Conditions: 150 mM KOAc, 10 mM MgCl2 and 150 mM bicine (pH 8.5), 24 C. The record gives the reactivity of an RNA of 170 nucleotides to 2A3 and DMS. Reactivities are given for positions 27 through 129. 2A3 is a SHAPE reagent: it acylates the 2'-hydroxyl of flexible nucleotides of all four kinds.

RNA sequence: GGGAACGACUCGAGUAGAGUCGAAAAAUCCCCUCUCCCGUUCGGGAAAAGGGGGACUCCGGAACUCCCUGCAGGUUGGGCACGAAGCCCCCACCGGGCGCUCCCCUCGGCAGACCGCCCAUUGGGUAUAGGCAACACUUCGGUGUUGCCAAAAGAAACAACAACAACAAC
Reactivity to 2A3 in 0.01 (KOAc 150mM, MgCl2 10mM, bicine 150mM(pH8.5), 24C), signal-to-noise 3, nucleotides 027 to 129: a030u060c000c000c010c000u010c000u000c000c000c030g070u200u230c200g000g000g010a020a020a000a060g000g000g000g000g000a040c050u020c020c000g070g020a000a020c020u010c000c000c000u010g000c020a010g020g030u100u050g030g000g000c020a000c120g110a070a000g000c000c000c000c020c000a040c010c010g000g020g000c000g000c010u010c010c000c010c000u000c010g020g000c000a010g000a140c020c050g000c010c000c000a080u050u170g030g020g020u060a020u100a120
Reactivity to DMS in 0.01 (KOAc 150mM, MgCl2 10mM, bicine 150mM(pH8.5), 24C), signal-to-noise 1, nucleotides 027 to 129: a170u020c000c000c000c080u000c090u000c020c010c000g060u070u050c200g080g000g030a030a000a120a080g010g000g000g000g000a070c030u040c000c040g000g000a000a000c090u050c040c050c030u000g070c050a000g000g060u050u030g010g030g100c080a060c170g040a070a130g010c000c000c000c000c000a100c070c000g080g000g030c070g040c110u010c000c000c000c060u040c000g020g050c110a040g040a050c060c090g000c020c000c030a130u000u000g000g000g000u040a090u070a130